Conditions: 150 mM KOAc, 10 mM MgCl2 and 150 mM bicine (pH 8.5), 24 C. Structure probing data (DMS and 2A3) for a 177-nucleotide construct. For 2A3, 8,173 sequencing reads were counted. It was measured as part of the RMDB library OK1LIB.
RNA sequence: GGGAACGACUCGAGUAGAGUCGAAAAUCAAACAUGCUCGAAGAGAAGAUGCAGCAGGACUACCUGCUGUGGCUGGAUCAACGUCGGUUCAAGCGGUGGCAGGGAACAAAGCCGGAGGAUCCUCCACCCUAGAGUUGAGUUUCGACUCAACUCUAGGAAAAGAAACAACAACAACAAC
Reactivity to DMS in 0.01 (KOAc 150mM, MgCl2 10mM, bicine 150mM(pH8.5), 24C), signal-to-noise 4, nucleotides 027 to 126: u040c080a150a100a070c120a040u000g020c030u020c010g040a060a120g020a070g000a140a060g000a110u000g010c000a010g030c020a010g000g000a290c260u030a060c020c000u000g020c010u000g010u000g000g090c080u000g000g010a090u010c040a080a120c140g010u000c040g040g000u000u020c000a050a110g000c080g010g000u000g010g020c090a050g000g010g010a040a060c090a020a100a050g020c040c050g000g000a140g000g000a070u040c010c010u010c020c060a070c110
Reactivity to 2A3 in 0.01 (KOAc 150mM, MgCl2 10mM, bicine 150mM(pH8.5), 24C), signal-to-noise 7, nucleotides 027 to 126: u130c040a050a040a030c040a060u100g020c010u010c030g090a120a050g040a000g010a130a010g030a050u120g000c000a000g000c000a000g000g070a170c100u250a300c050c000u000g000c000u000g000u020g020g000c030u040g010g020a040u040c030a070a090c070g080u030c030g090g010u060u050c040a100a040g020c030g030g000u040g030g000c040a030g020g010g030a050a040c040a090a070a000g040c040c030g030g010a030g020g020a010u030c010c000u030c020c020a040c010
The DMS profile rests on 5,513 reads.